[RMDB]
RNA sequence: GGGAACGACUCGAGUAGAGUCGAAAAACUGGACAAGUGUGGCAUCUGCCAGGGGGACGGUAGCAGCUGCACCCACGUGACGGGCAACUAUCGCAAGGGGAAUGCCCACCUUGGUAAGCCACAGCGCGACGCUAUUUGCAUUCGUGCAAAUAGCGUCAAAAGAAACAACAACAACAAC
Reactivity to 2A3 in 0.01 (KOAc 150mM, MgCl2 10mM, bicine 150mM(pH8.5), 24C), signal-to-noise 1, nucleotides 027 to 126: a010c040u110g110g040a020c050a190a150g090u010g000u000g070g000c010a070u040c110u110g010c060c000a050g050g010g010g030g010a010c070g000g070u040a000g030c050a010g070c000u050g030c020a110c010c060c000a060c020g030u030g060a070c050g010g020g000c040a040a060c050u000a000u090c020g000c040a090a090g000g010g030g040a200a090u180g000c000c000c000a060c000c000u010u000g020g020u000a010a050g020c020c000a000c000a000g010c010g080c120
Reactivity to DMS in 0.01 (KOAc 150mM, MgCl2 10mM, bicine 150mM(pH8.5), 24C), signal-to-noise 1, nucleotides 027 to 126: a160c210u000g040g040a130c190a030a050g030u000g030u000g000g010c060a030u000c290u000g000c010c000a060g000g010g000g000g010a170c100g010g000u010a030g000c060a070g010c100u000g000c250a180c000c070c060a040c300g020u000g000a050c130g000g030g000c130a070a100c000u010a060u000c000g040c080a200a110g010g010g000g020a100a140u000g000c000c020c000a060c000c000u000u000g000g010u000a030a070g000c010c000a000c000a020g000c170g050c160